[RMDB]
RNA sequence: GGGAACGACUCGAGUAGAGUCGAAAAGUUCGUAGGUGCGCGAGGCCGUAGGGACAUCAGCGACGUGCUGGACUUCUGCGACGGGGGUGUGGCUAUCCAAGACCCGUCGCAGGGCAUGAUGGUCCGCUCGAUACACAACAUUCGUGUUGUGUAUCGAAAAAGAAACAACAACAACAAC
Reactivity to 2A3 in 0.01 (KOAc 150mM, MgCl2 10mM, bicine 150mM(pH8.5), 24C), signal-to-noise 3, nucleotides 027 to 126: g030u040u040c030g060u090a050g020g070u040g060c050g000c040g030a090g000g040c010c020g030u080a080g020g030g010a010c000a070u050c030a020g040c010g120a160c080g110u110g030c040u100g020g070a080c000u120u040c000u060g000c000g000a010c000g020g000g000g000g000u220g020u030g070g040c100u140a060u100c020c010a030a020g130a090c000c010c000g010u000c000g000c000a000g000g000g000c020a050u160g030a050u090g050g030u000c000c010g000c020
Reactivity to DMS in 0.01 (KOAc 150mM, MgCl2 10mM, bicine 150mM(pH8.5), 24C), signal-to-noise 6, nucleotides 027 to 126: g010u010u000c050g020u010a080g020g010u000g020c050g030c050g010a110g000g020c020c040g000u000a100g010g000g010a080c070a050u000c030a060g020c030g000a090c140g010u010g010c040u000g010g010a050c070u000u010c000u000g000c000g000a020c010g000g010g000g000g030u000g010u000g010g020c300u010a120u010c020c040a060a100g000a230c010c000c000g000u000c010g020c000a000g000g010g000c120a080u010g010a080u000g000g010u000c010c030g010c120
Structure probing data (2A3 and DMS) for a 177-nucleotide construct. Source: RMDB library OK2TRN, as collected in RNAgym. For 2A3 the reverse transcriptase was SuperScript II with manganese. For DMS, 9,696 sequencing reads were counted. The RNA was probed in 150 mM KOAc, 10 mM MgCl2 and 150 mM bicine (pH 8.5) at 24 C.